Source: RMDB library VIROID, as collected in RNAgym.
This 207-nucleotide RNA was probed chemically with 2A3 and DMS.
The RNA was probed in 150 mM KOAc, 10 mM MgCl2 and 150 mM bicine (pH 8.5) at 24 C.
The DMS profile rests on 2,193 reads.
For DMS the reverse transcriptase was MarathonRT.

[RMDB]
RNA sequence: GGGAACGACUCGAGUAGAGUCGAAAACGAGGGGGGUGUGAUCCAGGUACCGCCGUAGAAACUGGAUUACGACGUCUACCCGGGAUUCAAACCCGGUCCCCCUCAGAGGUGACUCUGAGUGAAAGGUCGUGCUUAGCACACUGACGAGUUCCUGAAAGGAAUUUAACUAGUUCGCUAGUUAAAUUCCAAAAGAAACAACAACAACAAC
Reactivity to 2A3 in 0.01 (KOAc 150mM, MgCl2 10mM, bicine 150mM(pH8.5), 24C), signal-to-noise 2, nucleotides 027 to 156: c060g000a020g030g020g000g000g000g010u080g000u000g040a010u000c000c000a010g020g000u060a060c050c040g150c030c050g030u060a020g170a160a260a010c000u000g000g010a010u010u010a030c100g030a010c050g070u010c050u040a020c030c000c000g000g010g010a080u200u240c090a030a080a230c010c000c000g020g000u080c000c000c020c000c000u000c000a000g010a010g010g030u170g020a010c000u000c040u100g010a040g000u090g060a170a070a050g040g000u030c030g000u030g010c010u040u090a020g020c000a010c010a000c050u120g000a000c040g010a010g010u010u000c000c000u020g030a050a090a010
Reactivity to DMS in 0.01 (KOAc 150mM, MgCl2 10mM, bicine 150mM(pH8.5), 24C), signal-to-noise 1, nucleotides 027 to 156: c090g000a080g060g010g030g030g000g010u040g020u020g010a050u010c000c000a000g000g000u000a100c090c040g030c050c200g000u010a130g020a020a130a170c030u020g040g030a110u010u000a070c020g060a090c070g000u010c020u000a050c070c020c030g010g000g020a250u010u020c190a120a150a110c010c010c030g020g000u040c000c000c020c010c000u000c010a020g000a070g000g030u010g000a140c010u000c020u000g050a160g010u000g010a050a150a200g010g030u000c050g020u020g030c050u000u010a120g010c070a050c030a000c090u010g000a070c010g040a300g030u000u000c010c020u000g000a090a140a300